[RMDB]
RNA sequence: GGGAACGACUCGAGUAGAGUCGAAAAGAUGUUCUUUGGUGUGGGUACAUCGGGUGGCACAACAAUUACUAUCACGCAUGAUGGUGGUUGUGAACUCGUGGCUUGAUGCGUCAAGUUAUGAGUGUUCUAUGUUACUGUACCCACAGUGAUAUAGAAACACUAGGUGAGCGUUCGCGCUCACCUAGUGAAAAGAAACAACAACAACAAC
Reactivity to 2A3 in 0.01 (KOAc 150mM, MgCl2 10mM, bicine 150mM(pH8.5), 24C), signal-to-noise 1, nucleotides 027 to 156: g080a050u100g020u020u030c000u020u050u080g240g050u020g010u020g010g000g010u010a000c000a040u060c170g040g060g030u100g050g010c030a000c050a070a040c000a020a010u090u090a030c000u000a010u000c010a000c130g100c130a230u300g000a020u040g070g000u000g000g050u000u000g010u000g070a050a000c020u020c000g000u000g020g000c010u000u000g000a000u000g000c110g150u020c000a010a010g000u000u000a000u020g000a010g010u150g080u190u030c110u140a060u020g070u110u000a000c040u080g020u000a030c000c010c010a000c000a000g000u010g010a100u030a000u000a100g140a010a010a000